[RMDB]
RNA sequence: GGGAACGACUCGAGUAGAGUCGAAAAGAUAUGGAUGUUGAACUACUGAACAGCUGAUGACCUUGCUCGGAAACGAGCAAGCAAGGCUGUGGCAACAUCCUAAGUCAAAGGUCACUUCGGUGACCAAGGACUAUCCUGUGUUCGCACAGGAUAGUCCAAAAGAAACAACAACAACAAC
Reactivity to 2A3 in 0.01 (KOAc 150mM, MgCl2 10mM, bicine 150mM(pH8.5), 24C), signal-to-noise 2, nucleotides 027 to 126: g030a040u050a020u150g000g000a020u000g030u050u030g060a190a120c060u220a050c110u300g120a300a010c020a040g010c000u050g020a300u140g000a100c000c010u010u010g000c010u000c000g000g000a010a070a040c010g040a000g020c000a000a000g040c000a060a040g020g000c040u010g000u000g060g040c000a000a000c010a000u000c000c000u050a110a020g010u030c040a110a050a120g000g000u010c010a010c020u050u150c260g120g000u000g030a010c000c000a000a000
Reactivity to DMS in 0.01 (KOAc 150mM, MgCl2 10mM, bicine 150mM(pH8.5), 24C), signal-to-noise 2, nucleotides 027 to 126: g010a080u010a300u000g000g030a000u000g010u000u010g010a070a100c160u000a170c190u010g010a150a090c030a010g010c000u000g020a110u010g010a100c300c000u000u000g010c000u000c000g000g000a120a070a120c010g010a040g020c020a010a010g010c040a120a050g010g010c000u000g000u000g010g000c020a000a010c000a010u000c000c000u020a010a130g000u000c040a050a120a140g000g000u000c000a010c000u000u000c270g020g020u010g000a000c000c000a030a060
Structure probing data (2A3 and DMS) for a 177-nucleotide construct.
The DMS profile rests on 1,111 reads.
Source: RMDB library TTRDEL, as collected in RNAgym.
Conditions: 150 mM KOAc, 10 mM MgCl2 and 150 mM bicine (pH 8.5), 24 C.
2A3 is a SHAPE reagent: it acylates the 2'-hydroxyl of flexible nucleotides of all four kinds.
Reactivities are given for positions 27 through 126.
For DMS the reverse transcriptase was MarathonRT.